[RMDB]
RNA sequence: GGGAACGACUCGAGUAGAGUCGAAAAAAAAAGAUAUGGACCAAUGAACCUCAUCGAUCUAACGUAACAUCGAAUCGGAAACGAUUCGUGGUUAGGGAGAGGAUACCUUUGGUCCUAAGUCAAAAAAUCAUAUAAACUGGUUCGCCAGUUUAUAUGAAAAAGAAACAACAACAACAAC
Reactivity to DMS in 0.01 (KOAc 150mM, MgCl2 10mM, bicine 150mM(pH8.5), 24C), signal-to-noise 4, nucleotides 027 to 126: a040a040a060a140a070g000a020u000a130u010g000g000a010c010c010a010a010u000g010a120a110c010c000u010c000a300u010c240g000a040u020c000u000a010a010c000g010u000a020a010c200a010u000c000g010a010a000u000c010g010g000a020a020a050c010g020a000u000u000c010g020u000g000g000u000u000a000g000g000g000a030g010a010g020g000a050u010a050c250c190u010u000u000g010g010u000c000c000u000a010a060g000u010c000a010a040a070a110a080a100
Reactivity to 2A3 in 0.01 (KOAc 150mM, MgCl2 10mM, bicine 150mM(pH8.5), 24C), signal-to-noise 1, nucleotides 027 to 126: a000a000a000a010a010g060a000u040a020u060g000g010a000c020c000a000a060u100g080a100a160c020c020u040c040a280u300c060g010a010u010c010u010a000a000c010g060u040a030a010c030a190u260c030g000a010a000u000c010g000g020a020a020a000c000g000a000u000u000c000g010u000g000g010u020u010a000g000g000g000a010g000a000g010g010a020u140a090c030c050u090u020u030g010g000u000c000c000u000a010a010g000u000c040a000a000a000a000a000a300
This 177-nucleotide RNA was probed chemically with DMS and 2A3. The RNA was probed in 150 mM KOAc, 10 mM MgCl2 and 150 mM bicine (pH 8.5) at 24 C. For 2A3, 5,147 sequencing reads were counted. The DMS profile rests on 5,887 reads.